Conditions: 150 mM KOAc, 10 mM MgCl2 and 150 mM bicine (pH 8.5), 24 C. The record gives the reactivity of an RNA of 177 nucleotides to DMS. For DMS the reverse transcriptase was MarathonRT. It was measured as part of the RMDB library TTRINS.
RNA sequence: GGGAACGACUCGAGUAGAGUCGAAAAGAUAUGGAUCCUACCGAGAAUUUAGACCUUUGAUCUGUAGCUCUCGGAAACGAGAGCUACAGGGAGGUUGGGAAUUCGUUUGACGUAGGAUCCUAAGUCAGUUACGAGACAUGUUCGCAUGUCUCGUAACAAAAGAAACAACAACAACAAC
Reactivity to DMS in 0.01 (KOAc 150mM, MgCl2 10mM, bicine 150mM(pH8.5), 24C), signal-to-noise 2, nucleotides 027 to 126: g000a070u030a300u000g000g030a020u000c000c000u000a010c010c050g000a070g010a030a000u010u000u010a300g000a020c000c000u010u000u020g000a060u000c000u000g000u000a010g010c010u020c030u000c010g000g000a060a060a110c000g020a010g020a010g000c000u000a000c000a000g000g000g000a000g000g010u000u000g010g010g030a010a010u000u000c000g030u020u000u010g020a200c300g000u000a020g000g010a000u000c000c000u000a030a120g020u030c060a070